Record summary
The record gives the reactivity of an RNA of 177 nucleotides to 2A3 and DMS. The reactions ran in a buffer of 150 mM KOAc, 10 mM MgCl2 and 150 mM bicine (pH 8.5), at 24 C. For 2A3, 1,406 sequencing reads were counted. The data come from the RNA Mapping Database (RMDB), library 15KREP. DMS adducts were read by reverse transcription with MarathonRT. 2A3 adducts were read by reverse transcription with SuperScript II with manganese.
[RMDB]
RNA sequence: GGGAACGACUCGAGUAGAGUCGAAAACUUCCUGGUCUUCCGGAGAUCUUUCUCGAGCUCCUCCGCCUUUUUCCUUGCUGUGAUCCAUUUCUCGAGGGUCUCCUCCCUUGUUCCCCUUCGUCCUCUCCUACACUAGAGUGUUCGCACUCUAGUGUAGAAAAGAAACAACAACAACAAC
Reactivity to 2A3 in 0.01 (KOAc 150mM, MgCl2 10mM, bicine 150mM(pH8.5), 24C), signal-to-noise 1, nucleotides 027 to 126: c010u040u030c000c000u020g030g070u060c050u170u050c060c040g040g040a020g030a080u020c040u050u140u050c050u040c040g060a030g000c040u020c010c000u020c000c000g010c010c010u070u080u050u060u050c010c010u050u080g000c060u020g020u030g090a080u030c050c020a060u040u090u020c050u020c030g020a070g010g040g020u030c010u020c010c000u050c010c000c020u010u020g010u020u040c000c010c000c000u040u060c030g040u000c020c000u020c010u000c000
Reactivity to DMS in 0.01 (KOAc 150mM, MgCl2 10mM, bicine 150mM(pH8.5), 24C), signal-to-noise 2, nucleotides 027 to 126: c260u010u000c010c010u000g010g010u000c040u010u010c080c070g030g000a110g000a040u000c020u000u000u000c030u000c060g020a110g020c110u000c030c020u010c040c040g010c020c010u000u000u000u000u000c010c020u000u010g030c040u010g000u010g000a070u000c040c030a110u000u000u000c030u000c030g010a120g030g000g000u010c050u000c050c030u000c010c010c020u000u000g010u000u000c000c000c010c150u000u010c080g000u000c030c020u000c050u000c070